Description
Chemical mapping of a 177-nucleotide RNA with DMS and 2A3.

RNA sequence: GGGAACGACUCGAGUAGAGUCGAAAAGUCAAGUGCAUGGCCGAGUAGCUAAGUGCGGACGGGAUAAGCGCUGAAAGCAUCUAAGCGCCAAGCCCUUCCCAAGAUGAGUUUUCCCUACAGGUUCGUGCCAGCGAGUAGUAUUCGUACUACUCGCUGGAAAAGAAACAACAACAACAAC
Reactivity to DMS in 0.01 (KOAc 150mM, MgCl2 10mM, bicine 150mM(pH8.5), 24C), signal-to-noise 3, nucleotides 027 to 126: g020u000c110a020a110g050u020g010c060a050u000g000g000c000c010g000a090g000u010a060g010c040u020a040a060g000u010g000c070g010g000a070c050g000g020g010a000u040a140a220g010c000g050c000u010g010a110a170a110g000c130a060u020c100u020a120a020g000c010g010c010c060a080a280g030c010c000c000u000u000c000c000c020a150a100g000a060u030g020a060g000u000u000u000u010c000c020c010u010a100c210a150g020g000u000u000c030g010u050g010
Reactivity to 2A3 in 0.01 (KOAc 150mM, MgCl2 10mM, bicine 150mM(pH8.5), 24C), signal-to-noise 4, nucleotides 027 to 126: g030u040c040a070a100g100u060g120c060a100u080g020g000c010c000g030a020g070u070a010g000c010u040a090a090g080u050g140c110g040g010a000c040g000g000g010a020u020a030a030g000c000g000c010u020g010a060a070a030g070c020a040u050c060u120a020a010g000c000g010c030c000a080a090g010c000c000c000u010u000c000c000c020a020a030g150a090u220g010a000g040u000u000u010u030c000c000c000u020a030c060a080g070g040u020u160c020g040u120g050

For 2A3 the reverse transcriptase was SuperScript II with manganese.
The reactions ran in a buffer of 150 mM KOAc, 10 mM MgCl2 and 150 mM bicine (pH 8.5), at 24 C.
For DMS the reverse transcriptase was MarathonRT.